Structure probing data (2A3 and DMS) for a 177-nucleotide construct.
The data come from the RNA Mapping Database (RMDB), library RFM100.
The RNA was probed in 150 mM KOAc, 10 mM MgCl2 and 150 mM bicine (pH 8.5) at 24 C.
For 2A3 the reverse transcriptase was SuperScript II with manganese.
High DMS reactivity at an A or C suggests that its Watson-Crick edge is free.

[RMDB]
RNA sequence: GGGAACGACUCGAGUAGAGUCGAAAAGUGAAAGCAUACUGGCAAACCUACUUGAAAUGGGUGCAAAGAGAAAAUUAUGGUGGGCUUCGGACCACAAACGCCUUGAGAUGAUGAUAACAGAGCGUUAUACAACACGCUUCUUCGGAAGCGUGUUGUAAAAAGAAACAACAACAACAAC
Reactivity to 2A3 in 0.01 (KOAc 150mM, MgCl2 10mM, bicine 150mM(pH8.5), 24C), signal-to-noise 1, nucleotides 027 to 126: g040u140g000a190a000a000g030c000a000u050a200c060u040g000g110c170a070a000a000c000c000u050a000c000u090u080g010a000a300a000u100g000g000g000u110g000c010a000a240a000g020a120g150a000a050a000a000u210u000a140u280g150g100u000g040g000g000c000u060u120c180g000g070a040c000c000a000c000a170a010a010c140g000c000c000u010u210g210a050g000a010u070g000a000u110g040a110u090a230a030c000a090g170a050g000c000g050u000u000a050
Reactivity to DMS in 0.01 (KOAc 150mM, MgCl2 10mM, bicine 150mM(pH8.5), 24C), signal-to-noise 1, nucleotides 027 to 126: g000u000g030a100a020a120g020c090a090u030a180c160u000g000g090c080a160a180a100c010c000u010a040c030u000u040g000a000a090a190u000g000g020g110u000g000c080a020a080a010g000a060g000a070a050a020a080u020u050a160u020g000g070u000g000g000g030c000u070u000c110g000g020a000c020c000a010c080a000a090a000c030g000c010c050u010u040g000a110g000a080u070g000a020u050g010a170u050a060a110c050a080g030a020g000c000g020u000u000a250